[RMDB]
RNA sequence: GGGAACGACUCGAGUAGAGUCGAAAAGAAACUCGUUUCGCGUUGGCUGCCUAAUUCAAGGAAUUAGCGUGCCUUCAUGCUAGGGGUUUGAUAUCUGCUAAAACCCGGUGCAUUCAUCAAUGCAGGUCUCAUCCAAAUGCCUUCGGGCAUUUGGAAACAACUAAGCACCGUUCGCGGUGCUUAGUUGAAAAGAAACAACAACAACAAC
Reactivity to 2A3 in 0.01 (KOAc 150mM, MgCl2 10mM, bicine 150mM(pH8.5), 24C), signal-to-noise 2, nucleotides 027 to 156: g030a020a040a000c050u020c050g070u070u120u150c110g010c000g020u000u010g010g010c020u060g020c010c040u010a010a000u050u000c110a230a120g160g030a080a010u000u000a000g010c030g030u040g000c000c000u010u000c050a040u110g000c000u030a040g000g010g000g030u000u020u000g010a010u000a040u040c030u010g000c010u070a020a020a040a100c010c030c000g030g050u070g000c040a090u030u220c010a070u090c060a100a100u160g000c000a000g010g060u020c030u050c070a070u000c000c000a000a000a000u000g010c000c000u030u070c180g040g000g010c000a000u000u000u000g000g000a000a000a000
Reactivity to DMS in 0.01 (KOAc 150mM, MgCl2 10mM, bicine 150mM(pH8.5), 24C), signal-to-noise 1, nucleotides 027 to 156: g000a110a070a060c020u010c040g000u000u000u010c020g050c050g010u000u000g030g000c000u000g000c160c020u000a020a000u010u000c020a160a120g030g000a040a010u000u000a020g000c020g000u000g010c010c020u000u000c040a060u000g000c040u000a100g020g000g010g020u000u000u000g020a180u000a070u000c040u010g010c040u000a170a040a060a080c020c000c010g030g110u000g030c000a080u000u000c060a060u040c110a150a180u000g010c040a060g010g030u000c030u000c020a180u000c000c010a030a000a000u000g000c000c000u020u000c300g080g010g000c000a000u000u000u010g000g000a040a010a090